This 177-nucleotide RNA was probed chemically with 2A3 and DMS. Values cover nucleotides 27 to 126. It was measured as part of the RMDB library 15KREP. 2A3 adducts were read by reverse transcription with SuperScript II with manganese. The 2A3 profile rests on 3,477 reads.

[RMDB]
RNA sequence: GGGAACGACUCGAGUAGAGUCGAAAAUCUUUGAUCUCCUGAAGGAGGAAGGAGCUCUCGAGCGCUCUCCCGCCCCUCGGAUGGGCCGCUUCCGGCGAACGAGCCCGAAGAGCGAGUGGGGGAGAACCUGUUAAAGUAUCUUCGGAUACUUUAACAGAAAAGAAACAACAACAACAAC
Reactivity to 2A3 in 0.01 (KOAc 150mM, MgCl2 10mM, bicine 150mM(pH8.5), 24C), signal-to-noise 2, nucleotides 027 to 126: u020c010u030u040u130g060a080u140c010u030c020c010u080g140a100a090g070g090a020g030g000a040a020g000g010a000g000c020u000c000u020c030g050a050g030c060g000c010u010c000u000c010c000c000g000c010c010c000c010u000c010g000g040a040u080g040g000g010c000c000g010c020u060u030c030c060g130g030c060g000a010a000c010g000a030g000c000c000c010g010a030a010g000a010g030c080g000a010g010u010g020g000g000g000g000a000g000a000a000c000
Reactivity to DMS in 0.01 (KOAc 150mM, MgCl2 10mM, bicine 150mM(pH8.5), 24C), signal-to-noise 3, nucleotides 027 to 126: u000c030u020u000u000g010a100u020c020u000c010c000u000g020a130a150g000g000a110g010g000a140a070g000g000a060g020c110u010c000u000c040g010a090g010c300g020c020u000c000u000c000c020c000g010c000c000c060c030u010c030g000g010a300u000g000g000g020c000c010g000c160u000u000c050c080g000g010c100g020a040a040c000g010a190g010c010c000c020g000a300a120g010a010g030c140g010a010g000u000g010g000g000g010g000a030g010a050a030c090

The RNA was probed in 150 mM KOAc, 10 mM MgCl2 and 150 mM bicine (pH 8.5) at 24 C.